Structure probing data (DMS) for a 177-nucleotide construct.
[RMDB]
RNA sequence: GGGAACGACUCGAGUAGAGUCGAAAAUAGUAGAUAGGGGUGGAAGAUGACAGCUUUCCCGCAGCCCACCCUGUUAAGUGGUUUACCACGAUUAAUGUCAUCAAAAUAAAAUGGGACGCAAAACAAACAAUACCCCUGGUUUCGACCAGGGGUAUUGAAAAGAAACAACAACAACAAC
Reactivity to DMS in 0.01 (KOAc 150mM, MgCl2 10mM, bicine 150mM(pH8.5), 24C), signal-to-noise 1, nucleotides 027 to 126: u000a150g000u000a150g020a150u000a080g040g020g020g040u000g020g020a260a070g000a010u000g010a000c000a120g000c000u000u000u000c030c000c000g020c260a000g000c040c000c020a000c000c010c000u000g000u000u020a020a100g010u000g000g000u000u000u010a060c000c000a020c010g010a090u020u000a070a060u000g020u000c000a010u010c010a130a090a140a150u010a020a050a070a060u000g000g030g010a060c080g000c140a070a110a060a080c200a070a050a110
The data come from the RNA Mapping Database (RMDB), library M2PK90.